Conditions: 150 mM KOAc, 10 mM MgCl2 and 150 mM bicine (pH 8.5), 24 C. Structure probing data (2A3 and DMS) for a 207-nucleotide construct. Reactivities are given for positions 27 through 156.
RNA sequence: GGGAACGACUCGAGUAGAGUCGAAAACUGCUUGAUUUCCGUAGGACACUUCAGGUUGUGGCAAGGGAGAGCUGGUCUGCAAUCGGAAGUACCAGCCUCUUCCCUAGAGCACAACUAGAAAGAAGAACUAUAGAGUGUUAUAAGGGAGGCCCUGAGACCAGUAUUUAAUAUUCGUAUUAAAUACUGGAAAAGAAACAACAACAACAAC
Reactivity to 2A3 in 0.01 (KOAc 150mM, MgCl2 10mM, bicine 150mM(pH8.5), 24C), signal-to-noise 5, nucleotides 027 to 156: c040u110g020c030u080u090g050a080u180u070u040c020c020g010u040a030g030g030a060c030a010c090u020u030c040a080g010g020u010u010g020u020g090g100c050a050a020g000g000g010a010g000a000g000c010u000g000g010u010c070u050g050c080a130a280u190c100g120g060a110a020g030u130a030c000c000a020g050c050c030u020c000u100u170c000c000c000u050a050g010a010g030c000a000c000a010a000c000u010a030g110a070a130a010g060a030a010g020a050a020c030u030a030u080a140g050a040g040u060g020u050u120a160u040a110a030g010g010g020a010g040g020c030c010c020u050g060a050g050a060
Reactivity to DMS in 0.01 (KOAc 150mM, MgCl2 10mM, bicine 150mM(pH8.5), 24C), signal-to-noise 3, nucleotides 027 to 156: c040u000g010c040u000u000g010a120u010u000u000c000c020g050u010a090g020g000a150c040a060c030u010u000c040a300g010g020u000u000g060u010g020g040c020a160a040g010g030g010a080g000a050g020c010u000g040g020u000c000u000g000c070a170a210u010c180g040g000a080a040g040u010a040c020c010a040g020c050c020u000c020u000u010c000c000c000u000a050g020a180g010c000a020c020a020a030c010u000a070g010a110a080a090g010a100a140g010a060a060c070u000a110u000a070g010a170g020u010g030u000u000a090u000a050a130g020g020g010a070g040g010c030c020c020u000g010a210g010a190
The data come from the RNA Mapping Database (RMDB), library OK3TST.